[RMDB]
Chemical mapping of a 177-nucleotide RNA with 2A3 and DMS. For 2A3 the reverse transcriptase was SuperScript II with manganese. The 2A3 profile rests on 6,993 reads.
RNA sequence: GGGAACGACUCGAGUAGAGUCGAAAAGGCUUCGACACCCCGGCCCGCUGCGCGACGUCGGCCAGCGACAGACCCGCGUAGCCUACCCGGCCGAUCUCGGCGACGGCGGCGUCGAGGAUCUGCUGCAGUUUUAAUGCUAGUUCGCUAGCAUUAAAACAAAAGAAACAACAACAACAAC
Reactivity to 2A3 in 0.01 (KOAc 150mM, MgCl2 10mM, bicine 150mM(pH8.5), 24C), signal-to-noise 3, nucleotides 027 to 126: g010g010c020u070u060c080g040a030c040a200c080c010c000c000g020g000c020c000c010g000c010u020g020c020g020c010g010a060c040g030u020c000g000g040c050c020a050g040c020g040a030c030a050g090a070c030c020c030g010c030g050u060a020g020c000c000u050a060c020c010c000g000g010c000c000g000a040u000c040u020c050g170g030c040g070a210c000g080g020c030g010g010c050g000u010c000g010a030g020g020a070u010c010u080g000c010u030g010c010a030
Reactivity to DMS in 0.01 (KOAc 150mM, MgCl2 10mM, bicine 150mM(pH8.5), 24C), signal-to-noise 5, nucleotides 027 to 126: g010g020c030u000u000c080g000a070c090a140c030c030c030c030g010g000c020c020c040g010c020u010g010c010g020c020g020a040c200g020u000c010g000g030c010c030a080g020c060g010a080c100a080g010a050c040c020c040g010c110g000u000a070g000c010c060u010a110c110c040c030g000g010c000c010g000a030u000c200u000c010g020g020c000g000a100c040g000g010c030g000g010c100g030u000c010g000a040g000g010a130u000c030u000g010c030u000g020c120a140